Chemical mapping of a 177-nucleotide RNA with 2A3. The 2A3 profile rests on 681 reads. Conditions: 150 mM KOAc, 10 mM MgCl2 and 150 mM bicine (pH 8.5), 24 C.
[RMDB]
RNA sequence: GGGAACGACUCGAGUAGAGUCGAAAAGAUUAAGUAGGACGCAUGAUCUUGAGCUCUUUUCCUAUACUUUGUCCUAUGGCCAGCUUUCUCCUUAUUACGAAGAGAUUGCGGGAUGUGGGUGCAGAGUUCCGACAAGUAAGUUCGCUUACUUGUCGGAAAAAGAAACAACAACAACAAC
Reactivity to 2A3 in 0.01 (KOAc 150mM, MgCl2 10mM, bicine 150mM(pH8.5), 24C), signal-to-noise 1, nucleotides 027 to 126: g050a020u160u140a110a080g000u030a020g070g040a000c050g010c120a050u050g000a060u020c000u110u050g050a030g020c090u090c000u140u000u070u020c050c000u110a150u020a090c000u010u000u010g010u010c000c000u000a000u020g020g080c010c020a020g020c030u030u030u040c010u100c020c050u170u170a220u250u100a240c160g030a020a030g030a010g000a030u030u070g000c060g040g000g030a040u020g020u020g060g000g000u150g050c000a010g000a000g050u020